This 177-nucleotide RNA was probed chemically with 2A3 and DMS.
For DMS, 1,354 sequencing reads were counted.
The RNA was probed in 150 mM KOAc, 10 mM MgCl2 and 150 mM bicine (pH 8.5) at 24 C.
RNA sequence: GGGAACGACUCGAGUAGAGUCGAAAAGAUAUGGAAACAGGAGAGCUUGGACCAAAGGUCUCGGAAACGAGACUUUGCUAGCUCCCUGUUUCCUAAGUCAAAACGUGCUUGGUUCGCCAAGCACGAACUGCAUAUGCGUGUUCGCACGCAUAUGCAGAAAAGAAACAACAACAACAAC
Reactivity to 2A3 in 0.01 (KOAc 150mM, MgCl2 10mM, bicine 150mM(pH8.5), 24C), signal-to-noise 1, nucleotides 027 to 126: g000a000u010a020u070g000g020a000a020a000c000a010g010g180a300g010a020g290c060u300u300g060g060a040c060c010a040a040a030g170g060u020c020u010c000g010g020a040a020a010c000g000a010g010a000c000u010u000u000g000c040u020a010g000c000u050c020c010c000u000g000u000u010u000c000c000u000a010a000g000u000c010a020a000a080a190c030g000u030g030c010u000u010g000g080u110u140c300g010c070c000a010a000g000c020a000c000g000a000a000
Reactivity to DMS in 0.01 (KOAc 150mM, MgCl2 10mM, bicine 150mM(pH8.5), 24C), signal-to-noise 2, nucleotides 027 to 126: g030a010u000a210u000g000g000a000a000a000c000a000g000g000a220g000a000g020c000u010u000g010g000a030c300c050a020a000a010g020g010u000c000u010c030g040g000a040a000a070c000g030a010g010a020c000u000u000u000g000c000u000a020g000c000u000c000c000c020u000g000u000u000u000c000c000u000a000a030g000u000c010a130a070a050a180c010g020u000g000c000u000u000g010g020u000u010c300g040c020c000a010a010g000c000a000c000g020a020a160